[RMDB]
RNA sequence: GGGAACGACUCGAGUAGAGUCGAAAAUAUACAUCAGAAGUCGGCACAACACCAGACUCGCGGUGAGCGAUGCAGCGUAGCUUAUGCUACGCAGCUGCUGUGCGGAAGGCUAGCAAAAGCUAGCCUAACUGGUGCGGUAUUUCGAUACCGCACCAGUAAAAGAAACAACAACAACAAC
Reactivity to DMS in 0.01 (KOAc 150mM, MgCl2 10mM, bicine 150mM(pH8.5), 24C), signal-to-noise 2, nucleotides 027 to 126: u020a080u040a090c110a080u030c100a170g020a070a110g040u020c010g050g030c010a030c130a060a050c070a050c140c040a170g030a170c200u000c060g000c060g020g030u050g000a190g000c020g010a040u010g100c030a020g020c030g000u000a000g000c000u000u020a100u030g010c000u000a000c000g000c020a040g030c020u010g000c020u000g000u000g000c010g040g000a140a020g000g000c000u000a000g000c030a060a100a190a130g020c010u000a000g030c050c000u000a010
Reactivity to 2A3 in 0.01 (KOAc 150mM, MgCl2 10mM, bicine 150mM(pH8.5), 24C), signal-to-noise 2, nucleotides 027 to 126: u130a000u050a020c040a080u100c030a000g040a100a030g200u160c050g020g050c110a010c040a150a110c010a020c050c010a000g160a080c030u000c060g000c020g030g010u150g000a020g010c000g100a110u100g020c020a000g000c010g020u010a000g000c000u150u300a210u300g010c000u040a000c000g000c010a030g010c010u040g000c000u000g010u100g030c000g060g050a000a000g020g020c000u010a000g020c010a280a090a000a000g000c000u000a000g000c000c000u000a000

The record gives the reactivity of an RNA of 177 nucleotides to DMS and 2A3. Reactivities are rounded to 0.1 and cut off at 0 and 3. It was measured as part of the RMDB library OK1LIB. Conditions: 150 mM KOAc, 10 mM MgCl2 and 150 mM bicine (pH 8.5), 24 C.